The record gives the reactivity of an RNA of 177 nucleotides to DMS and 2A3. The DMS profile rests on 3,369 reads. The 2A3 profile rests on 2,722 reads. For 2A3 the reverse transcriptase was SuperScript II with manganese.
RNA sequence: GGGAACGACUCGAGUAGAGUCGAAAAACCUGGACGAUUGUCGUCCUUGGAUUUGAGCCUUUAGAAAAGGAAGUCCUUGAAUUAUAGAGGUACAUUAGUGCGUUGUCUGCCAAAACAGGUACGUACGGGAAGAACUUACAUUCGUGUAAGUUCUUCCAAAAGAAACAACAACAACAAC
Reactivity to DMS in 0.01 (KOAc 150mM, MgCl2 10mM, bicine 150mM(pH8.5), 24C), signal-to-noise 4, nucleotides 027 to 126: a060c010c000u000g020g000a030c010g000a300u010u010g040u010c010g030u000c000c000u000u000g020g020a150u000u000u010g010a300g010c030c010u000u000u010a110g000a090a130a060a030g000g010a190a090g000u000c020c010u000u000g010a100a100u010u010a120u010a090g020a030g010g010u000a050c140a100u010u000a070g020u000g020c010g020u000u010g030u000c000u010g010c050c100a070a060a120a300c030a010g000g000u000a010c020g000u000a020c010g000
Reactivity to 2A3 in 0.01 (KOAc 150mM, MgCl2 10mM, bicine 150mM(pH8.5), 24C), signal-to-noise 3, nucleotides 027 to 126: a010c000c000u000g000g000a000c020g050a100u130u250g160u300c010g000u000c010c000u000u110g060g010a110u070u020u160g120a030g060c010c000u030u060u060a150g070a030a130a000a020g040g020a100a040g080u050c000c000u000u060g040a100a060u300u100a100u080a190g060a030g040g080u100a050c040a100u140u230a030g000u000g020c020g040u040u080g020u020c000u010g040c100c100a000a120a010a050c010a000g060g000u010a000c020g000u010a000c020g000